This 177-nucleotide RNA was probed chemically with DMS and 2A3. Reactivities are given for positions 27 through 126. For 2A3 the reverse transcriptase was SuperScript II with manganese. The reactions ran in a buffer of 150 mM KOAc, 10 mM MgCl2 and 150 mM bicine (pH 8.5), at 24 C. For DMS the reverse transcriptase was MarathonRT.
[RMDB]
RNA sequence: GGGAACGACUCGAGUAGAGUCGAAAAUAUACAUCAGAAGUCGGCACAACUCCCGACUCGCGGUGAGCGAUGCAGCGUAGCGCGAGCUACGCAGCUGCUGUGCGGAUGGCUAGCAAAAGCUAGCCGAAGCCUAGGCGUCAUUCGUGACGCCUAGGCUAAAAGAAACAACAACAACAAC
Reactivity to DMS in 0.01 (KOAc 150mM, MgCl2 10mM, bicine 150mM(pH8.5), 24C), signal-to-noise 1, nucleotides 027 to 126: u020a060u040a140c050a110u000c080a060g010a140a060g020u000c040g010g050c250a120c090a150a130c050u020c050c000c100g000a100c040u030c000g000c300g000g000u030g020a210g000c040g000a150u000g000c000a050g000c020g000u000a000g000c010g020c300g010a160g000c000u000a000c000g000c000a040g030c000u000g000c030u010g020u000g000c000g000g000a030u080g000g010c000u010a000g010c010a200a060a060a160g010c000u000a000g000c000c000g000a020
Reactivity to 2A3 in 0.01 (KOAc 150mM, MgCl2 10mM, bicine 150mM(pH8.5), 24C), signal-to-noise 2, nucleotides 027 to 126: u120a000u020a000c060a020u080c000a000g080a150a000g020u000c000g030g230c080a000c100a300a300c190u080c000c000c000g120a080c020u020c010g060c080g090g000u130g000a020g010c030g300a180u080g010c010a000g000c000g000u000a000g000c000g000c070g050a010g070c000u000a000c000g000c000a010g010c000u000g010c000u030g040u090g060c010g070g000a090u120g000g000c000u000a000g000c000a000a000a300a000g000c000u000a000g050c000c000g000a000